[RMDB]
RNA sequence: GGGAACGACUCGAGUAGAGUCGAAAAACAAAAUUGAGAUGUUUUUUGAGGCAAUUCUCAACAAUCAACUUCAAUAAAUCUGCCGAUGCAAUCACCCGUGAAAAAUCCAUAACAGGCACAUUGUGGACUAAAUAUUUCAGUUCGCUGAAAUAUUUAGAAAAGAAACAACAACAACAAC
Reactivity to 2A3 in 0.01 (KOAc 150mM, MgCl2 10mM, bicine 150mM(pH8.5), 24C), signal-to-noise 1, nucleotides 027 to 126: a000c050a020a140a070a000u050u060g010a040g010a010u020g020u000u060u000u010u030u030g050a020g030g000c070a160a170u300u100c030u000c020a010a000c020a040a040u070c050a010a060c020u180u150c020a030a050u050a130a090a060u020c050u030g010c000c030g060a030u080g000c010a030a030u050c020a040c040c020c000g030u030g010a130a070a000a000a020u000c000c000a030u030a080a050c040a140g040g030c030a010c020a020u020u030g030u030g010g000a010
Reactivity to DMS in 0.01 (KOAc 150mM, MgCl2 10mM, bicine 150mM(pH8.5), 24C), signal-to-noise 2, nucleotides 027 to 126: a090c080a090a040a100a070u010u000g010a030g000a130u010g000u000u000u000u000u000u000g000a020g010g000c090a140a090u020u010c000u020c010a010a030c090a030a030u000c020a050a080c040u000u000c030a020a050u010a030a070a100u010c070u000g020c010c030g020a050u000g010c060a090a050u000c060a060c010c000c010g030u000g020a060a070a060a110a080u010c040c030a020u000a020a060c060a060g000g010c060a020c100a130u000u010g040u000g000g000a120
Structure probing data (2A3 and DMS) for a 177-nucleotide construct. For DMS the reverse transcriptase was MarathonRT. For DMS, 1,367 sequencing reads were counted.